[RMDB]
RNA sequence: GGGAACGACUCGAGUAGAGUCGAAAAUUGUUCAGAAUCUUUCUCCGCAAUGCCUAUGUGUACACUUCACAAGGGUUUGUGGUGGUCAAUGGCAAAGUUUCUACACUUGUCAAACAAGUGUUAGACUGUUCAUAGACUUGUUCGCAAGUCUAUGAACAAAAGAAACAACAACAACAAC
Reactivity to DMS in 0.01 (KOAc 150mM, MgCl2 10mM, bicine 150mM(pH8.5), 24C), signal-to-noise 1, nucleotides 027 to 126: u000u000g030u000u000c100a200g000a130a300u000c090u000u010u000c000u000c000c010g020c010a010a020u000g050c010c010u000a070u000g050u000g010u000a110c210a130c210u000u000c000a010c020a050a300g000g010g010u000u000u000g010u000g000g000u000g010g050u010c040a010a140u000g010g000c060a030a060a000g060u000u000u000c010u010a000c120a000c000u000u000g030u030c260a050a040a300c000a030a030g060u000g000u000u000a060g030a050c060u010
Reactivity to 2A3 in 0.01 (KOAc 150mM, MgCl2 10mM, bicine 150mM(pH8.5), 24C), signal-to-noise 1, nucleotides 027 to 126: u070u010g030u130u250c030a020g030a110a090u020c020u030u050u010c030u000c000c000g020c030a040a040u170g100c000c000u150a110u140g060u000g000u090a140c150a080c190u100u050c040a020c020a160a110g010g060g000u040u010u010g040u050g020g000u000g000g000u030c060a030a110u070g010g000c000a040a080a020g050u020u020u040c010u060a000c010a000c010u030u060g020u080c040a040a130a240c000a000a090g000u000g010u010u020a020g010a020c020u010

Background:
This 177-nucleotide RNA was probed chemically with DMS and 2A3. Reactivities are rounded to 0.1 and cut off at 0 and 3. For 2A3, 799 sequencing reads were counted. It was measured as part of the RMDB library 15KREP.